[RMDB]
RNA sequence: GGGAACGACUCGAGUAGAGUCGAAAACAAAAAAACAAGAAAAUGACUAUCAAGAUUUAAUGAUUAGUCAAAAUCUAAACCAAAAUCUAGCUUUUGCUAGCGUUUAGCAGCUAGUUGCUCCAUUAUAUGUUCUGGAUAAUGGAAGCAUGCCUAAGAAGACUAGGUUACAGUUCGCUGUAACCUAGUCAAAAGAAACAACAACAACAAC
Reactivity to DMS in 0.01 (KOAc 150mM, MgCl2 10mM, bicine 150mM(pH8.5), 24C), signal-to-noise 1, nucleotides 027 to 156: c050a010a000a140a070a090a000a040c000a010a070g000a040a170a150a300u020g020a010c000u000a010u000c010a090a240g020a280u000u010u010a120a200u000g000a050u020u010a000g010u020c020a030a020a070a030u000c030u000a030a070a190c040c030a020a070a070a140u000c000u000a010g020c050u000u000u000u020g020c000u000a040g060c160g010u000u000u000a020g020c040a040g020c000u000a070g000u000u000g020c080u000c000c000a030u000u000a000u000a040u000g030u000u000c130u000g020g000a020u000a000a040u000g000g000a050a100g080c010a020u000g000c040c010u000a040a090g040a280a180
Reactivity to 2A3 in 0.01 (KOAc 150mM, MgCl2 10mM, bicine 150mM(pH8.5), 24C), signal-to-noise 3, nucleotides 027 to 156: c040a010a040a070a010a010a000a030c080a080a020g050a030a050a020a030u030g000a000c000u030a000u020c000a070a010g080a300u090u290u300a120a100u140g010a010u020u190a010g000u000c000a000a020a000a020u010c000u080a060a030a040c050c050a010a000a000a050u040c000u000a000g000c010u040u150u250u280g000c010u010a040g030c010g150u150u190u090a010g000c020a000g010c000u020a010g000u010u010g010c000u000c000c000a000u020u020a010u010a020u130g090u090u030c020u110g040g000a000u000a000a000u010g000g000a050a000g000c000a010u110g000c000c050u130a160a120g050a060a000